Conditions: 150 mM KOAc, 10 mM MgCl2 and 150 mM bicine (pH 8.5), 24 C. The record gives the reactivity of an RNA of 177 nucleotides to 2A3 and DMS. For 2A3 the reverse transcriptase was SuperScript II with manganese. For DMS the reverse transcriptase was MarathonRT.

RNA sequence: GGGAACGACUCGAGUAGAGUCGAAAACUAGGUAUAUUGUAAAGAUAAAGGAUAACUCGGUUGGGAUUGCGUUCUGUAAUGGACGCAUGAACCAGGAAUUCCUAGUAGUCGCGUGUCACUAACGGGCGUACUCAGUAUGAUUCGUCAUACUGAGUACAAAAGAAACAACAACAACAAC
Reactivity to 2A3 in 0.01 (KOAc 150mM, MgCl2 10mM, bicine 150mM(pH8.5), 24C), signal-to-noise 9, nucleotides 027 to 126: c020u020a030g060g100u090a120u030a080u200u200g080u130a090a120a040g100a070u130a090a170a040g060g020a030u060a110a070c020u040c120g060g060u070u050g110g050g010a070u020u020g000c000g010u000u010c010u010g120u070a080a120u300g000g000a000c000g000c000a000u000g030a010a050c010c000a000g030g030a020a060u060u030c000c000u010a030g040u030a010g020u020c040g000c040g180u040g060u090c040a020c130u040a110a020c010g010g020g010c030
Reactivity to DMS in 0.01 (KOAc 150mM, MgCl2 10mM, bicine 150mM(pH8.5), 24C), signal-to-noise 9, nucleotides 027 to 126: c020u000a050g010g020u010a070u010a100u010u000g000u020a070a090a140g010a070u010a060a100a080g010g010a050u000a070a180c030u000c100g010g000u000u010g010g010g010a110u000u000g010c010g010u000u000c000u000g000u020a090a070u010g020g010a000c000g000c000a000u000g000a090a070c000c010a030g000g000a090a120u010u000c010c000u000a070g010u000a100g010u000c030g010c050g000u000g010u000c090a080c120u010a090a090c090g010g010g020c170